RNA sequence: GGGAACGACUCGAGUAGAGUCGAAAAUCGUACCCGCCAGCUGGCUAAUGUCAUAAUUAACAAAGUUGCUACUACAUCUGCAAAGUUUAAUCGAAAAAUUUGCCAGUGAUAUGAUGGCCUUGUCACAACCAAAGACCGUAUUCGUACGGUCUUUGGUAAAAGAAACAACAACAACAAC
Reactivity to DMS in 0.01 (KOAc 150mM, MgCl2 10mM, bicine 150mM(pH8.5), 24C), signal-to-noise 3, nucleotides 027 to 126: u030c090g000u000a110c020c030c030g030c030c010a130g000c010u000g020g050c010u000a010a020u010g030u020c130a140u020a110a040u010u020a030a030c070a100a130a100g020u010u000g000c020u020a060c120u020a090c260a060u030c150u000g000c060a020a010a040g020u000u020u010a060a030u000c080g000a040a100a110a030a040u000u020u010g010c000c020a020g000u010g010a130u020a090u020g000a070u010g000g000c030c060u000u030g020u000c080a080c120a120
Reactivity to 2A3 in 0.01 (KOAc 150mM, MgCl2 10mM, bicine 150mM(pH8.5), 24C), signal-to-noise 4, nucleotides 027 to 126: u100c010g010u020a090c000c000c000g010c030c000a030g020c000u020g000g000c030u050a010a020u030g050u020c050a050u030a200a030u070u030a020a020c020a080a190a060g180u020u030g050c010u020a030c040u030a050c020a190u130c120u110g000c020a020a000a050g020u040u070u090a050a040u040c040g110a030a020a060a080a080u030u010u020g000c000c000a010g000u000g030a030u020a080u300g110a060u050g040g000c030c050u040u060g130u130c020a030c010a090